[RMDB]
This 177-nucleotide RNA was probed chemically with 2A3 and DMS. For 2A3 the reverse transcriptase was SuperScript II with manganese. Source: RMDB library TTRDEL, as collected in RNAgym. The RNA was probed in 150 mM KOAc, 10 mM MgCl2 and 150 mM bicine (pH 8.5) at 24 C. The 2A3 profile rests on 19,067 reads.
RNA sequence: GGGAACGACUCGAGUAGAGUCGAAAAGAUAUGGAUAGCAUCGAUCUCACCAGGAGGUCGGAAACGACUCCCCACCCUGAUGAGGGAGCUAUCCUAAGUCAAAGGUAGCAACUUCGGUUGCUACCAACAAGGGAUACUAGUUCGCUAGUAUCCCUUGAAAAGAAACAACAACAACAAC
Reactivity to 2A3 in 0.01 (KOAc 150mM, MgCl2 10mM, bicine 150mM(pH8.5), 24C), signal-to-noise 5, nucleotides 027 to 126: g030a030u090a040u140g000g010a000u010a000g000c020a110u300c030g040a060u030c010u000c000a010c020c010a000g000g030a010g000g010u010c030g000g000a040a060a000c020g010a010c010u110c050c020c000c010a030c000c010c010u010g020a020u010g010a010g000g020g010a010g000c000u000a000u000c000c000u030a240a040g050u030c060a140a020a060g000g010u000a000g010c000a000a000c010u070u100c300g090g000u000u000g000c000u000a000c010c000a000a000
Reactivity to DMS in 0.01 (KOAc 150mM, MgCl2 10mM, bicine 150mM(pH8.5), 24C), signal-to-noise 7, nucleotides 027 to 126: g000a060u000a290u010g010g010a010u000a000g020c000a300u000c150g010a050u000c000u000c010a010c020c010a020g000g000a130g010g000u000c000g000g000a050a080a160c030g010a020c020u010c120c010c000c030a300c050c000c000u010g010a020u000g000a030g000g010g000a020g010c010u000a000u000c000c010u000a050a060g010u000c050a100a100a140g010g000u010a010g010c000a000a010c000u000u000c160g010g010u000u000g010c000u000a000c000c010a010a070